[RMDB]
RNA sequence: GGGAACGACUCGAGUAGAGUCGAAAAAUCCUGGCAUUCGUGCCAGGAUGUUUACCGAGAAUGUCCCUCGGUAUAAAAGGGCAACCCUUGGAAACAAGGGAAUAAUCGCAGUGUUCGCACUGCGAAAUGCAAUUUUGGAUUUCGAUCCAAAAUUGCAAAAAGAAACAACAACAACAAC
Reactivity to DMS in 0.01 (KOAc 150mM, MgCl2 10mM, bicine 150mM(pH8.5), 24C), signal-to-noise 1, nucleotides 027 to 126: a050u000c000c000u000g020g010c000a000u000u010c190g000u000g020c000c020a020g020g000a000u000g000u000u000u000a090c010c000g010a050g000a160a110u000g030u000c010c010c000u000c010g000g000u000a020u000a030a080a040a050g010g000g000c070a070a200c020c000c000u000u000g000g000a090a110a210c000a000a000g000g000g020a100a030u010a090a130u010c010g020c000a010g010u000g010u000u000c200g010c000a000c010u000g000c000g000a000a040a060